[RMDB]
RNA sequence: GGGAACGACUCGAGUAGAGUCGAAAAGAUAUGGAUGUGUUGAGACUCGUACGCCUGGUCGGAAACGACCAUGCGCAAAUCUUGCACAUCCUAAGUCGGAGCCUAAAGUUCUUCGGAACUUUAGGAAGGUAGAUACGUAGUUCGCUACGUAUCUACCAAAAGAAACAACAACAACAAC
Reactivity to DMS in 0.01 (KOAc 150mM, MgCl2 10mM, bicine 150mM(pH8.5), 24C), signal-to-noise 4, nucleotides 027 to 126: g000a010u000a060u010g000g000a010u000g000u010g010u000u020g030a010g010a020c300u000c230g000u010a050c000g000c000c040u000g000g000u000c000g000g000a020a010a030c000g020a010c010c000a000u000g000c000g030c030a040a050a100u000c000u000u000g000c000a010c000a000u000c000c010u000a000a070g000u000c010g000g000a200g010c000c000u000a000a010a000g000u000u000c000u000u020c210g020g000a010a000c000u010u000u000a000g000g010a000a020
Reactivity to 2A3 in 0.01 (KOAc 150mM, MgCl2 10mM, bicine 150mM(pH8.5), 24C), signal-to-noise 7, nucleotides 027 to 126: g000a000u010a010u050g000g000a000u010g030u020g040u260u300g080a020g010a040c160u150c300g190u210a010c020g000c000c010u010g000g000u000c000g000g000a010a010a000c000g000a000c030c000a000u030g070c010g000c020a110a300a300u020c010u000u020g000c000a000c000a000u000c000c000u000a010a000g000u000c020g060g090a050g060c000c000u000a000a000a000g010u010u000c010u030u150c300g110g010a000a000c000u000u000u000a000g000g010a010a050